[RMDB]
RNA sequence: GGGAACGACUCGAGUAGAGUCGAAAAAGCACUGAGGCGAGGGGAGCUGACCCCCGGCCUCAGGGGUCUCAUGCAGGGACAGAAGCUGUCUGGCCCAGGCAGGACACAGGCUGGGCGUGAACCUGACCUUCACGAGAUCGUUCGCGAUCUCGUGAAGAAAAGAAACAACAACAACAAC
Reactivity to DMS in 0.01 (KOAc 150mM, MgCl2 10mM, bicine 150mM(pH8.5), 24C), signal-to-noise 1, nucleotides 027 to 126: a140g010c030a150c000u010g010a050g010g010c020g050a070g000g010g000g010a200g050c140u020g030a230c090c010c000c000c020g050g000c000c000u000c000a020g000g000g000g010u000c000u010c040a190u000g000c090a160g010g000g010a060c010a030g000a080a060g030c040u000g000u000c000u000g000g000c020c000c000a060g010g000c000a120g000g000a120c100a140c160a090g000g020c000u000g000g010g020c010g000u010g000a190a160c050c020u000g010a170c110
Structure probing data (DMS) for a 177-nucleotide construct. The reactions ran in a buffer of 150 mM KOAc, 10 mM MgCl2 and 150 mM bicine (pH 8.5), at 24 C. For DMS the reverse transcriptase was MarathonRT. Source: RMDB library OK2TRN, as collected in RNAgym.